The record gives the reactivity of an RNA of 177 nucleotides to 2A3 and DMS. The RNA was probed in 150 mM KOAc, 10 mM MgCl2 and 150 mM bicine (pH 8.5) at 24 C. In probing experiments dimethyl sulfate is read out at A N1 and C N3, which are open when not base-paired. The DMS profile rests on 4,081 reads.

[RMDB]
RNA sequence: GGGAACGACUCGAGUAGAGUCGAAAAGCGGUUGCCUAGAGGCAUGGUCGUUUACCGCGACUUUCCAGUGAAUGGAUCAACCUGUUGAUGCAGGUAGUGUGUAUCAUGCGAAUCGUUCUGCGAUUCGGGCAGUAAAUCAGUUCGCUGAUUUACUGCCAAAAGAAACAACAACAACAAC
Reactivity to 2A3 in 0.01 (KOAc 150mM, MgCl2 10mM, bicine 150mM(pH8.5), 24C), signal-to-noise 1, nucleotides 027 to 126: g000c030g020g000u080u060g000c010c030u240a230g080a160g210g000c060a010u030g050g000u060c020g020u040u040u060a040c000c000g000c020g000a030c000u000u000u000c000c000a010g040u050g300a150a090u080g090g010a050u100c010a040a020c000c000u070g080u030u120g240a130u300g000c010a000g030g040u040a060g060u070g040u030g030u080a080u140c060a040u140g040c000g020a010a000u000c010g010u140u030c070u300g000c000g010a000u030u010c000g020
Reactivity to DMS in 0.01 (KOAc 150mM, MgCl2 10mM, bicine 150mM(pH8.5), 24C), signal-to-noise 4, nucleotides 027 to 126: g010c020g010g000u010u000g010c000c020u010a160g000a180g030g020c000a040u010g020g000u010c020g010u000u000u000a010c030c010g010c020g020a110c100u000u000u000c010c030a120g010u010g000a100a100u010g010g010a070u000c050a150a050c020c000u010g010u000u000g000a180u020g010c010a010g010g010u000a020g020u010g010u010g020u010a020u010c050a050u010g030c030g000a020a010u000c010g020u000u010c220u010g000c000g010a020u000u000c020g020